[RMDB]
RNA sequence: GGGAACGACUCGAGUAGAGUCGAAAAUAGGUCUGAUGAUUUGGCCAAUGCUGGCGCUGGCAUGGAUGUUUAACAUUGUGGAACGUGGUAGUGCUGCGUACAGCCGUAUUCGCGCGAUGCUGGCGGACUACACCGAAGACUUCGGUCUUCGGUGUAGAAAAGAAACAACAACAACAAC
Reactivity to 2A3 in 0.01 (KOAc 150mM, MgCl2 10mM, bicine 150mM(pH8.5), 24C), signal-to-noise 2, nucleotides 027 to 126: u140a000g050g010u000c050u060g110a130u040g010a070u210u100u300g020g000c020c000a000a030u140g040c050u010g000g050c000g030c090u050g000g010c030a020u030g020g290a050u010g070u010u120u100a080a050c040a090u120u280g100u230g060g030a050a000c000g000u020g090g080u090a100g010u020g000c010u000g000c010g020u050a160c000a000g000c020c000g050u040a110u000u100c020g000c000g000c020g070a050u070g000c050u080g020g000c020g060g000a000
Reactivity to DMS in 0.01 (KOAc 150mM, MgCl2 10mM, bicine 150mM(pH8.5), 24C), signal-to-noise 2, nucleotides 027 to 126: u000a110g010g010u000c000u000g000a170u010g000a100u010u010u000g000g020c010c030a090a120u010g030c040u010g020g000c010g020c020u000g000g010c010a010u010g000g000a090u000g000u010u010u000a110a100c030a160u030u000g030u000g020g000a040a020c030g090u000g010g020u010a110g060u000g000c000u000g010c040g020u000a070c040a040g000c020c120g020u010a080u000u000c060g010c040g020c020g000a070u000g000c070u000g010g020c000g030g000a160

Overview: This 177-nucleotide RNA was probed chemically with 2A3 and DMS. For DMS, 1,812 sequencing reads were counted. The reactions ran in a buffer of 150 mM KOAc, 10 mM MgCl2 and 150 mM bicine (pH 8.5), at 24 C. Values cover nucleotides 27 to 126. It was measured as part of the RMDB library OK2TST. High 2A3 reactivity points to a flexible backbone, as in loops and unpaired stretches.